This 207-nucleotide RNA was probed chemically with DMS and 2A3.
Values cover nucleotides 27 to 156.
For 2A3 the reverse transcriptase was SuperScript II with manganese.
[RMDB]
RNA sequence: GGGAACGACUCGAGUAGAGUCGAAAAGGUAAGCCGAUACGAUUUGUGGAAGGAACCUAUACACACGCCAAAACCCUCGCUGAUUCAUUACCCUCUACACGUAUACAAGAUGUAAUACUACGUAUCGAAGCGGAGACUCGUGAUCAGAGUGAAAGUGAUCUGGCAAUCUAUUCGUAGAUUGCCAGAUAAAAGAAACAACAACAACAAC
Reactivity to DMS in 0.01 (KOAc 150mM, MgCl2 10mM, bicine 150mM(pH8.5), 24C), signal-to-noise 2, nucleotides 027 to 156: g000g010u010a050a110g020c080c020g010a160u000a080c020g010a110u000u000u000g020u000g020g010a180a100g000g030a090a050c070c010u000a110u000a070c070a090c120a060c030g000c030c040a050a010a020a130c020c030c020u010c050g020c010u000g010a040u000u000c040a130u000u000a100c090c000c020u000c000u000a110c030a100c030g000u000a080u000a120c050a080a130g000a130u010g010u000a110a070u010a100c030u000a030c050g040u020a060u000c020g000a050a110g020c000g040g000a130g000a030c030u000c090g020u000g010a020u010c050a050g020a040g010u000g000a080a010a070g000u000g040
Reactivity to 2A3 in 0.01 (KOAc 150mM, MgCl2 10mM, bicine 150mM(pH8.5), 24C), signal-to-noise 3, nucleotides 027 to 156: g070g040u060a080a050g050c040c020g000a020u020a070c040g070a080u090u080u270g050u010g010g050a080a070g090g020a040a010c010c020u010a000u110a040c080a020c000a030c050g070c050c020a020a070a070a110c010c010c010u040c020g010c020u020g060a090u090u050c040a040u050u110a070c000c030c000u000c010u050a020c050a000c100g040u040a030u020a090c020a030a090g050a230u140g020u160a040a060u050a090c100u030a040c050g010u020a010u030c010g060a080a000g030c000g080g010a030g010a050c090u050c080g030u040g000a010u100c040a030g040a010g020u050g040a070a030a020g130u120g000